[RMDB]
RNA sequence: GGGAACGACUCGAGUAGAGUCGAAAAGAUAUGGAGCAGGCCUGGGUACAACAGCUAUCUUCGGAAACGAAGAUAGACAUGUACAGGGCUGCUCCUAAGUCAAAAUCCUACAGUUCGCUGUAGGAAAGCUUAGUAGACACUUCGGUGUCUACUAAGCAAAAGAAACAACAACAACAAC
Reactivity to 2A3 in 0.01 (KOAc 150mM, MgCl2 10mM, bicine 150mM(pH8.5), 24C), signal-to-noise 1, nucleotides 027 to 126: g000a000u040a000u050g010g000a000g040c020a000g090g300c030c010u090g010g070g140u300a180c070a230a000c020a170g000c000u030a020u000c000u000u000c000g000g010a020a000a020c000g020a010a020g000a000u010a000g010a010c000a100u170g050u100a010c000a020g000g010g040c000u000g000c020u000c000c000u000a000a020g000u030c020a050a020a020a200u040c020c000u000a000c000a000g020u070u210c240g020c180u000g020u010a020g000g000a130a020a000
Reactivity to DMS in 0.01 (KOAc 150mM, MgCl2 10mM, bicine 150mM(pH8.5), 24C), signal-to-noise 1, nucleotides 027 to 126: g030a050u010a240u020g000g000a040g040c000a010g000g000c000c000u000g040g000g040u010a050c160a120a080c280a170g000c000u000a020u010c000u000u000c020g010g000a050a090a230c000g000a030a010g000a010u030a000g040a030c060a110u000g000u000a090c000a170g000g000g020c000u000g020c010u000c000c010u000a000a060g000u000c010a060a060a060a200u010c000c020u000a000c000a000g030u020u010c300g050c000u010g000u000a010g000g010a010a030a080